[RMDB]
RNA sequence: GGGAACGACUCGAGUAGAGUCGAAAACUAGGAAGGAGGAUGCCGUGAGGAAGACGGAGACGGAGCUGCAGGCAAAGGGACUCUCUGUCAAGGGUGUUGUCUGUCAUGUGGACAAAAAGGGCGACCGCUUUAGUGGUCGUUUCGACGACCACUAAAGAAAAGAAACAACAACAACAAC
Reactivity to 2A3 in 0.01 (KOAc 150mM, MgCl2 10mM, bicine 150mM(pH8.5), 24C), signal-to-noise 3, nucleotides 027 to 126: c040u050a070g060g060a050a040g040g030a020g010g010a030u070g010c020c020g030u060g020a060g000g050a040a030g020a010c060g010g020a040g010a020c060g030g020a020g040c030u060g010c060a030g020g050c040a050a000a070g060g000g030a040c010u020c000u000c030u070g090u090c060a040a060g030g000g000u060g030u060u030g020u000c030u020g030u020c010a100u120g070u100g040g000a030c030a020a120a020a030a020g030g030g000c020g040a040c030c020g020
Reactivity to DMS in 0.01 (KOAc 150mM, MgCl2 10mM, bicine 150mM(pH8.5), 24C), signal-to-noise 7, nucleotides 027 to 126: c070u010a090g000g010a070a070g010g010a070g010g000a070u000g010c050c060g020u010g010a090g010g010a080a070g010a090c080g010g010a080g010a060c110g000g000a160g010c070u000g000c070a060g010g010c060a030a080a090g000g000g010a100c070u000c020u000c040u010g020u000c110a080a070g010g000g010u000g000u000u000g010u000c030u000g010u010c110a090u000g010u010g010g000a060c090a030a040a050a100a100g010g000g020c080g000a100c070c100g010

Annotation
Source: RMDB library OK2TRN, as collected in RNAgym. This 177-nucleotide RNA was probed chemically with 2A3 and DMS. For DMS the reverse transcriptase was MarathonRT. Values are in units of 0.01, from 0 to 300, in steps of 10. For 2A3, 4,325 sequencing reads were counted. For DMS, 9,645 sequencing reads were counted. The reactions ran in a buffer of 150 mM KOAc, 10 mM MgCl2 and 150 mM bicine (pH 8.5), at 24 C. 2A3 adducts were read by reverse transcription with SuperScript II with manganese.